Notes: The record gives the reactivity of an RNA of 170 nucleotides to 2A3 and DMS. For DMS, 92,908 sequencing reads were counted.
[RMDB]
RNA sequence: GGGAACGACUCGAGUAGAGUCGAAAAUCGGUUCUUCUUCGAUCCGGACCGGCUCAUCUCGGCAAAGGGCGGCAGUCCUCAGUGCUCUUACUCUUUCCUAUAAAGAGGAGACUGCUGGACUCGCCGCAUACUGGUAUGUUCGCAUACCAGAAAAGAAACAACAACAACAAC
Reactivity to 2A3 in 0.01 (KOAc 150mM, MgCl2 10mM, bicine 150mM(pH8.5), 24C), signal-to-noise 9, nucleotides 027 to 129: u070c010g000g010u020u010c010u200u040c040u140u180c140g030a040u000c010c010g000g020a020c030c000g010g000c000u000c010a150u030c020u000c000g010g010c060a090a080a080g140g050g000c000g000g000c000a000g000u010c000c000u000c000a030g010u130g250c020u000c000u060u190a270c010u010c000u020u040u040c060c080u170a170u240a280a020a000g010a000g010g000a010g000a000c000u010g040c070u010g000g000a000c000u020c070g000c000c000g010c000a000u010a010
Reactivity to DMS in 0.01 (KOAc 150mM, MgCl2 10mM, bicine 150mM(pH8.5), 24C), signal-to-noise 9, nucleotides 027 to 129: u060c010g000g000u010u010c000u080u050c130u030u040c190g030a010u010c010c050g000g020a060c100c030g000g030c020u000c040a150u030c020u010c030g010g050c160a040a050a030g060g000g040c020g020g040c020a030g000u000c010c010u030c020a020g020u040g080c060u000c000u020u070a300c040u010c020u030u030u050c210c160u080a170u110a090a010a010g000a020g000g020a010g000a000c010u030g010c090u000g000g000a030c000u030c110g030c000c000g000c010a000u000a040
For 2A3 the reverse transcriptase was SuperScript II with manganese.